[RMDB]
RNA sequence: GGGAACGACUCGAGUAGAGUCGAAAACGUAUAAUCGGCGCAUUAAUGCGCGCCGUAUACGAUGCUACGAUUACGGCAUGCAUCGUACGCGUACGUAAUGCUAGCCGCGCGUAUAUAUACGCGAUGCCUGGAUUGCUCGGUUCGCCGAGCAAUCCAGAAAAGAAACAACAACAACAAC
Reactivity to DMS in 0.01 (KOAc 150mM, MgCl2 10mM, bicine 150mM(pH8.5), 24C), signal-to-noise 1, nucleotides 027 to 126: c040g000u010a100u010a100a120u030c100g050g010c020g000c000a070u000u040a120a060u010g010c100g010c000g020c210c060g000u000a000u000a000c020g000a100u000g000c040u160a080c030g000a140u040u040a130c060g020g010c190a060u010g000c000a010u000c080g000u000a020c050g010c050g000u000a030c070g000u010a030a050u000g020c020u000a170g000c060c030g000c080g000c020g000u000a030u020a100u010a100u000a010c000g030c030g030a110u000g000c120
Reactivity to 2A3 in 0.01 (KOAc 150mM, MgCl2 10mM, bicine 150mM(pH8.5), 24C), signal-to-noise 1, nucleotides 027 to 126: c010g030u070a030u030a130a150u180c000g000g000c000g110c000a040u040u140a130a130u170g000c010g000c000g000c000c030g000u030a020u000a000c000g000a000u040g010c000u020a080c080g160a220u290u120a130c050g020g020c150a030u080g000c010a000u020c090g010u050a060c090g000c040g040u040a010c000g040u030a100a020u070g040c040u030a030g020c010c060g010c000g010c000g040u000a080u000a010u000a000u000a140c010g000c000g000a020u120g080c000